An RNA of 177 nucleotides, treated with DMS and 2A3 and read out base by base. The RNA was probed in 150 mM KOAc, 10 mM MgCl2 and 150 mM bicine (pH 8.5) at 24 C. It was measured as part of the RMDB library 15KREP.
RNA sequence: GGGAACGACUCGAGUAGAGUCGAAAACCUACAUUUUCUAUGGCACCUGUUGAAUUUUAUGAAGACCGCAUCUUGGACUUUAAAGUUCUUGAUAAUGGUAUCAUUAGGGAUGUAAAUCCUGAUGAUAGAGUUAUAUUAGGUUCGCCUAAUAUAACUCAAAAGAAACAACAACAACAAC
Reactivity to DMS in 0.01 (KOAc 150mM, MgCl2 10mM, bicine 150mM(pH8.5), 24C), signal-to-noise 3, nucleotides 027 to 126: c060c020u000a110c090a080u000u010u000u000c060u000a050u000g010g010c040a030c060c040u000g010u000u000g010a070a070u010u010u010u010a060u020g020a100a090g020a100c030c030g020c240a060u000c050u000u010g000g000a030c010u000u000u010a110a090a080g010u000u000c010u000u010g000a050u000a060a140u000g010g020u000a040u000c000a000u010u000a060g030g010g000a020u010g010u010a090a110a060u010c020c010u000g000a030u000g000a050u000a080
Reactivity to 2A3 in 0.01 (KOAc 150mM, MgCl2 10mM, bicine 150mM(pH8.5), 24C), signal-to-noise 2, nucleotides 027 to 126: c000c000u030a030c030a040u140u200u050u070c050u090a140u070g050g000c010a040c040c030u050g050u170u050g080a070a130u070u010u110u160a070u070g050a040a030g070a030c010c000g010c090a020u030c020u050u050g020g000a000c000u050u100u200a080a300a030g000u000u040c000u000u010g020a030u070a150a060u110g040g000u010a010u030c000a000u000u050a040g060g040g010a010u060g070u120a050a040a030u030c000c010u010g020a010u010g000a000u050a060